[RMDB]
RNA sequence: GGGAACGACUCGAGUAGAGUCGAAAAAAUUACAGACGGCUCAGUUAGCUUGUGGAGUCCUGUGCACAAAGGGCUCUUUGGUUAGACUUCUUGCCUAUUUUGGUCAGUAGGGGUCUCCUGUGGCCAAAUUGUCGUGUAAUUUCGAUUACACGACAAUAAAAGAAACAACAACAACAAC
Reactivity to 2A3 in 0.01 (KOAc 150mM, MgCl2 10mM, bicine 150mM(pH8.5), 24C), signal-to-noise 2, nucleotides 027 to 126: a010a010u300u250a050c060a070g260a020c030g030g000c000u060c070a020g020u030u010a010g010c020u130u130g060u090g120g020a010g000u000c000c000u080g010u200g040c090a050c080a160a090a000g000g020g000c000u000c000u070u090u020g050g000u060u010a080g060a130c030u060u020c020u080u040g040c030c000u050a130u050u150u020u020g010g000u030c010a010g030u020a030g150g100g090g070u060c160u000c010c010u070g010u040g010g020c000c000a050a060
Reactivity to DMS in 0.01 (KOAc 150mM, MgCl2 10mM, bicine 150mM(pH8.5), 24C), signal-to-noise 3, nucleotides 027 to 126: a080a050u010u000a090c090a100g010a090c170g000g010c020u000c120a040g010u000u010a050g000c020u000u000g040u010g010g010a030g020u000c000c000u000g000u020g030c220a120c300a060a120a020g010g000g010c010u000c000u000u010u000g000g010u000u000a050g020a080c030u000u000c070u000u000g020c040c000u000a120u010u000u000u000g000g010u000c060a030g010u010a020g020g010g010g010u000c150u000c050c020u000g010u000g000g000c010c010a010a030
This 177-nucleotide RNA was probed chemically with 2A3 and DMS. For 2A3, 1,044 sequencing reads were counted. DMS adducts were read by reverse transcription with MarathonRT. The RNA was probed in 150 mM KOAc, 10 mM MgCl2 and 150 mM bicine (pH 8.5) at 24 C. For DMS, 4,486 sequencing reads were counted.